The data come from the RNA Mapping Database (RMDB), library OK2TST. The record gives the reactivity of an RNA of 177 nucleotides to DMS and 2A3. Values cover nucleotides 27 to 126. For 2A3 the reverse transcriptase was SuperScript II with manganese. In probing experiments dimethyl sulfate is read out at A N1 and C N3, which are open when not base-paired. For 2A3, 1,035 sequencing reads were counted.
RNA sequence: GGGAACGACUCGAGUAGAGUCGAAAAGCGUGGCAUGCGUCAUCACGAUGAAGUUGUUUUCCGUGGAGAGGGAAGCUGCGAUCCGUACACGGGCGAGCCUGGCGAUAUUGUCAUUGUCUUAGAACAAGACGGACGCAGUAUUCGUACUGCGUCCGUCAAAAGAAACAACAACAACAAC
Reactivity to DMS in 0.01 (KOAc 150mM, MgCl2 10mM, bicine 150mM(pH8.5), 24C), signal-to-noise 1, nucleotides 027 to 126: g000c010g000u000g010g020c060a100u000g030c030g020u010c020a060u000c110a040c140g010a080u000g010a070a060g020u000u000g000u000u020u020u000c020c010g040u000g000g000a140g000a100g000g000g050a130a070g010c040u010g010c030g000a000u010c030c050g010u000a110c100a130c040g000g000g030c050g000a050g000c080c040u000g010g030c000g020a030u030a110u000u000g000u040c080a060u010u000g000u030c010u030u000a180g000a010a130c190a070a100
Reactivity to 2A3 in 0.01 (KOAc 150mM, MgCl2 10mM, bicine 150mM(pH8.5), 24C), signal-to-noise 1, nucleotides 027 to 126: g040c050g040u070g000g010c090a050u150g030c020g010u030c040a060u040c030a000c060g040a030u130g100a040a060g020u160u140g120u010u080u020u050c030c030g030u110g030g020a130g010a070g000g020g030a010a050g000c040u060g010c000g020a060u000c030c000g020u050a070c070a000c020g020g040g000c030g020a010g000c000c030u000g010g030c000g030a060u040a170u140u110g050u010c010a030u070u160g010u010c030u060u090a030g040a060a010c020a110a000